[RMDB]
RNA sequence: GGGAACGACUCGAGUAGAGUCGAAAAAAGUAGUAGUUCAGUCUAAAUAUCGCUGACUAACAAUUGAGCCAGAGGGACGCUUGUUGGUGACAGUGUCUGGAGAUACCGGUUGUUUUAAUGUGUAUUAGCACUACUUUUGGUUCUAAAGAGGUAAGCCUAAAGGAGUUUUUUUCGAAAAACUCCUUUAAAAAGAAACAACAACAACAAC
Reactivity to DMS in 0.01 (KOAc 150mM, MgCl2 10mM, bicine 150mM(pH8.5), 24C), signal-to-noise 1, nucleotides 027 to 156: a000a020g010u000a060g030u010a050g040u010u000c010a070g000u010c040u000a050a120a170u000a060u010c070g030c020u000g000a090c010u000a050a070c030a070a130u000u000g030a120g010c010c010a070g000a190g010g030g010a030c090g010c070u000u000g010u000u000g000g010u000g000a090c050a030g030u000g000u010c020u000g020g000a090g010a120u000a080c060c020g030g060u000u000g010u000u000u010u000a050a100u010g010u010g020u000a090u020u010a110g040c030a040c040u010a030c010u000u000u010u010g020g000u000u000c020u000a050a090a090g010a080g010g010u000a040a170g040c070c170
Annotation
An RNA of 207 nucleotides, treated with DMS and read out base by base. For DMS, 1,847 sequencing reads were counted. DMS adducts were read by reverse transcription with MarathonRT. The RNA was probed in 150 mM KOAc, 10 mM MgCl2 and 150 mM bicine (pH 8.5) at 24 C. Reactivities are given for positions 27 through 156.